The record gives the reactivity of an RNA of 177 nucleotides to DMS. In probing experiments dimethyl sulfate is read out at A N1 and C N3, which are open when not base-paired. For DMS, 4,320 sequencing reads were counted. For DMS the reverse transcriptase was MarathonRT.

[RMDB]
RNA sequence: GGGAACGACUCGAGUAGAGUCGAAAAGAUAUGGAUUUCUCCUUGCUCUCUGACUUAACGAGAAUCCGUCGGAAACGACGGUCGUUCGAUGAGUUAAGGUCAGAGAGCAAGGAGAAAUCCUAAGUCAGGAUAAGCUAAAGUUCGCUUUAGCUUAUCCAAAAGAAACAACAACAACAAC
Reactivity to DMS in 0.01 (KOAc 150mM, MgCl2 10mM, bicine 150mM(pH8.5), 24C), signal-to-noise 3, nucleotides 027 to 126: g010a060u010a300u010g000g010a010u000u000u000c000u000c000c010u000u000g000c010u000c010u000c000u000g010a060c000u000u000a010a010c000g000a250g000a020a010u000c000c000g000u010c000g010g010a160a130a300c000g010a020c010g000g000u020c300g010u000u000c000g010a180u010g020a260g010u000u000a000a000g010g020u000c010a010g000a010g010a000g000c010a000a000g000g010a010g010a010a000a000u000c000c000u010a010a110g010u000c050a130
It was measured as part of the RMDB library TTRINS. The RNA was probed in 150 mM KOAc, 10 mM MgCl2 and 150 mM bicine (pH 8.5) at 24 C.